[RMDB]
RNA sequence: GGGAACGACUCGAGUAGAGUCGAAAAUCUGUCCGAGCUGGUGGCGACAGACGUGCUGAGAAGCUCUCUGUGUAUGAACUGAUGGAAAUGAUCUAUGAUGAGCUGGAUCGGAGAGAUUCUUGUCAAGCCUUGGCACAGCAUUCGUGCUGUGCCAAGGAAAAGAAACAACAACAACAAC
Reactivity to DMS in 0.01 (KOAc 150mM, MgCl2 10mM, bicine 150mM(pH8.5), 24C), signal-to-noise 1, nucleotides 027 to 126: u000c020u000g010u010c000c060g000a070g010c030u000g000g050u000g020g010c070g010a030c020a050g020a040c170g010u010g000c000u000g000a160g030a190a020g000c010u000c040u000c020u000g020u020g000u000a110u020g000a080a050c100u000g000a140u000g000g010a060a170a170u000g000a020u010c030u020a040u000g010a170u010g000a230g030c020u000g000g010a030u000c040g010g000a020g010a030g000a030u000u000c040u000u000g040u000c110a080a110g000
Reactivity to 2A3 in 0.01 (KOAc 150mM, MgCl2 10mM, bicine 150mM(pH8.5), 24C), signal-to-noise 1, nucleotides 027 to 126: u020c000u020g060u000c030c040g000a020g040c060u100g070g040u030g060g070c030g000a000c000a030g050a050c110g060u030g000c000u000g010a020g040a040a020g000c000u000c000u000c000u020g030u020g040u040a160u180g100a140a100c060u080g030a020u040g050g130a040a050a170u270g060a040u000c020u120a110u150g070a050u040g030a030g010c010u000g010g000a040u000c030g000g040a030g000a000g020a010u100u000c020u110u040g070u110c070a060a000g000
Chemical mapping of a 177-nucleotide RNA with DMS and 2A3.